This 177-nucleotide RNA was probed chemically with DMS and 2A3. Values are in units of 0.01, from 0 to 300, in steps of 10. The RNA was probed in 150 mM KOAc, 10 mM MgCl2 and 150 mM bicine (pH 8.5) at 24 C. For DMS, 2,557 sequencing reads were counted.
RNA sequence: GGGAACGACUCGAGUAGAGUCGAAAAAUACAAAACAUUAGCCAGGCAUGGUGGCCCAUGCCUGUAGUCCCAGCUACCCAGGAGGCUGAGGCACGAGAAUCGCUUGAAUCCGGAAGGCAGAGGUUGCGUGAACACAAAGAUUCGUCUUUGUGUUCACAAAAGAAACAACAACAACAAC
Reactivity to DMS in 0.01 (KOAc 150mM, MgCl2 10mM, bicine 150mM(pH8.5), 24C), signal-to-noise 3, nucleotides 027 to 126: a060u010a100c100a070a120a060a100c130a100u000u010a090g010c080c030a010g020g000c040a010u000g010g050u000g020g020c300c030c030a020u000g010c000c010u000g000u010a040g000u010c000c010c000a070g010c030u000a050c040c020c010a080g020g010a100g010g020c050u010g010a050g000g030c020a060c060g000a090g000a050a040u000c050g000c030u000u000g010a050a080u000c060c050g000g000a110a050g010g010c040a030g000a080g000g010u000u000g010c100
Reactivity to 2A3 in 0.01 (KOAc 150mM, MgCl2 10mM, bicine 150mM(pH8.5), 24C), signal-to-noise 2, nucleotides 027 to 126: a010u240a060c070a050a080a130a000c020a150u070u130a040g080c020c010a010g000g000c010a010u010g000g090u110g160g060c060c010c000a000u010g000c000c010u010g020u000a010g000u000c010c000c000a010g000c010u080a050c030c000c000a030g010g050a030g060g000c000u040g000a080g070g010c030a010c020g090a090g050a100a110u100c060g000c090u050u120g030a050a020u010c000c010g040g000a010a020g050g000c020a000g020a030g040g050u090u090g040c020